[RMDB]
RNA sequence: GGGAACGACUCGAGUAGAGUCGAAAAGCAAGAUGCUUCGGCAUCUUGCAGUCGUAGCGCGAUCGACAGAAUUACAGCUAUGUCGAACGAGGAUGAGCGCGCACAUCAUCCCUUUCGAGGGAUGAAAUUGGUUUAGAUUAUUCGUAAUCUAAACCAAAAAAGAAACAACAACAACAAC
Reactivity to DMS in 0.01 (KOAc 150mM, MgCl2 10mM, bicine 150mM(pH8.5), 24C), signal-to-noise 9, nucleotides 027 to 126: g010c000a000a010g010a010u000g010c000u000u010c210g020g010c000a000u000c000u000u000g010c010a040g010u010c060g010u000a080g020c010g010c000g010a160u000c000g010a020c000a020g000a130a150u000u010a120c300a120g010c120u000a090u000g000u000c010g010a030a090c070g010a120g010g010a130u000g000a110g010c000g000c010g010c020a100c190a150u000c000a010u000c000c000c000u000u000u010c150g010a020g010g000g000a000u000g000a000a050a100
Reactivity to 2A3 in 0.01 (KOAc 150mM, MgCl2 10mM, bicine 150mM(pH8.5), 24C), signal-to-noise 4, nucleotides 027 to 126: g000c000a000a000g010a000u000g010c010u040u100c220g090g010c000a000u000c000u000u010g000c000a000g040u020c040g010u040a020g020c000g000c000g020a040u020c010g000a010c000a010g090a070a040u210u160a170c040a070g070c100u110a060u080g010u010c010g010a030a030c040g030a100g160g100a090u150g060a040g060c000g000c010g000c000a010c000a060u030c000a000u000c000c010c000u020u050u030c200g100a020g000g000g000a010u000g000a010a000a010
Source: RMDB library M2PK50, as collected in RNAgym.
Structure probing data (DMS and 2A3) for a 177-nucleotide construct.
DMS adducts were read by reverse transcription with MarathonRT.
2A3 adducts were read by reverse transcription with SuperScript II with manganese.
Values cover nucleotides 27 to 126.